[RMDB]
Overview:
This 177-nucleotide RNA was probed chemically with DMS. Values cover nucleotides 27 to 126. DMS adducts were read by reverse transcription with MarathonRT. Source: RMDB library TTRINS, as collected in RNAgym.

RNA sequence: GGGAACGACUCGAGUAGAGUCGAAAAGAUAUGGAUCUAUUAUAUCCGGCGUUGUAGACAUGCUGAUGGGUCGGAAACGACCCUACCAGCAACAGCUACAACGCCGGAUAUAAUGAGAUCCUAAGUCGAAGAGUAUUUGGUUCGCCAAAUACUCUUCAAAAGAAACAACAACAACAAC
Reactivity to DMS in 0.01 (KOAc 150mM, MgCl2 10mM, bicine 150mM(pH8.5), 24C), signal-to-noise 1, nucleotides 027 to 126: g020a080u010a300u000g010g000a000u010c000u000a060u000u000a000u000a000u000c010c010g010g000c010g010u000u010g000u000a000g010a080c070a270u010g010c000u010g010a100u000g010g000g060u000c020g040g000a130a110a240c010g000a000c000c000c010u000a010c120c000a010g000c010a030a080c270a150g000c020u000a010c000a000a000c000g010c000c000g000g000a010u000a000u000a000a000u000g000a000g010a010u000c000c000u000a000a110g000u000c160